[RMDB]
RNA sequence: GGGAACGACUCGAGUAGAGUCGAAAAACGCCUUUAUAGCUGGUUAUUUGAAAAGUCUGGGCGUGACUACAUCCCUGGCCGCCAGCUGCAGUUUUAUGCCCAGUGCCGCCGGUGGUUGUCCGCCGGCCACUUGAACAGACUUCGGUCUGUUCAAGUGAAAAGAAACAACAACAACAAC
Reactivity to 2A3 in 0.01 (KOAc 150mM, MgCl2 10mM, bicine 150mM(pH8.5), 24C), signal-to-noise 3, nucleotides 027 to 126: a000c020g020c010c000u140u220u090a300u180a090g010c000u010g040g000u160u090a220u200u270u300g140a160a170a040a020g040u020c030u080g000g020g000c020g010u020g020a000c020u060a050c020a090u020c000c000c000u010g040g010c000c030g020c030c000a000g000c000u010g000c010a020g000u020u070u050u190a070u110g000c000c000c000a060g040u070g110c030c020g010c000c000g050g010u010g010g060u180u250g090u050c020c000g000c000c000g010g020c000
Reactivity to DMS in 0.01 (KOAc 150mM, MgCl2 10mM, bicine 150mM(pH8.5), 24C), signal-to-noise 5, nucleotides 027 to 126: a050c030g020c030c120u010u010u020a100u000a060g010c000u000g010g000u000u010a090u020u010u010g010a080a070a070a080g000u000c010u010g000g000g010c070g020u000g000a060c060u000a090c170a140u010c050c010c010u000g010g000c090c150g000c010c000a010g010c020u000g010c100a060g000u000u010u010u010a080u020g000c020c030c030a080g000u000g010c080c090g010c030c010g010g010u000g000g020u010u000g000u010c040c000g010c030c010g000g010c010